[RMDB]
Structure probing data (2A3) for a 177-nucleotide construct.
Values cover nucleotides 27 to 126.

RNA sequence: GGGAACGACUCGAGUAGAGUCGAAAAUAACCUAACCUGCAGUGGCCACUGGCGACUCACUCCCAAGGAACAACGUCAUCUGCGCUGUGGCUAUGUGACUGAGACACAUCCGUUCCUGUGGAUAGCAGGAUGCUCGCGUGUUCGCACGCGAGCAUCCAAAAGAAACAACAACAACAAC
Reactivity to 2A3 in 0.01 (KOAc 150mM, MgCl2 10mM, bicine 150mM(pH8.5), 24C), signal-to-noise 1, nucleotides 027 to 126: u170a060a030c020c030u050a060a020c000c000u100g040c000a020g000u100g000g000c000c000a130c030u140g000g040c000g010a000c040u060c030a060c100u120c000c020c100a240a050g040g030a060a000c000a070a080c130g030u020c000a040u020c110u280g010c040g000c060u020g020u040g020g000c000u010a060u100g030u000g020a020c000u000g040a020g120a040c020a020c000a120u030c040c020g020u120u020c060c000u070g030u110g020g060a060u120a070g010c000a000
The RNA was probed in 150 mM KOAc, 10 mM MgCl2 and 150 mM bicine (pH 8.5) at 24 C.